About this RNA:
Chemical mapping of a 177-nucleotide RNA with DMS and 2A3. It was measured as part of the RMDB library TTRDES. Values cover nucleotides 27 to 126. For 2A3 the reverse transcriptase was SuperScript II with manganese. The RNA was probed in 150 mM KOAc, 10 mM MgCl2 and 150 mM bicine (pH 8.5) at 24 C.
[RMDB]
RNA sequence: GGGAACGACUCGAGUAGAGUCGAAAAGAUAUGGAUCUAGGAAGACAUGACGCUUGUCGGAAACGACAAGACGUCAACAGCUUCUAGAUCCUAAGUCAAAAGGUGUUAGCGUUCGCGCUAACACCAACGGUAUGCCUAUCUUCGGAUAGGCAUACCGAAAAGAAACAACAACAACAAC
Reactivity to DMS in 0.01 (KOAc 150mM, MgCl2 10mM, bicine 150mM(pH8.5), 24C), signal-to-noise 2, nucleotides 027 to 126: g030a010u000a060u000g000g000a010u000c000u000a040g010g010a020a020g020a070c080a110u010g010a030c000g000c020u000u000g000u000c000g010g000a010a020a020c000g010a010c000a000a010g000a070c010g010u000c000a110a130c200a160g020c010u000u000c000u010a000g040a000u010c000c000u000a000a060g000u000c010a150a110a170a120g000g020u000g010u000u000a010g000c020g000u020u010c290g030c000g030c000u000a000a000c000a000c000c000a010a010
Reactivity to 2A3 in 0.01 (KOAc 150mM, MgCl2 10mM, bicine 150mM(pH8.5), 24C), signal-to-noise 2, nucleotides 027 to 126: g010a010u020a000u080g010g000a000u000c000u030a050g150g290a130a020g070a080c160a300u300g000a010c000g010c010u000u000g000u000c010g000g000a000a000a000c000g030a000c000a000a000g040a110c010g000u010c010a020a030c040a000g000c000u010u000c010u000a000g000a000u000c000c000u000a020a000g020u000c010a000a010a080a160g000g020u000g000u000u000a000g000c050g020u040u050c300g000c030g000c230u000a000a000c000a000c000c000a010a000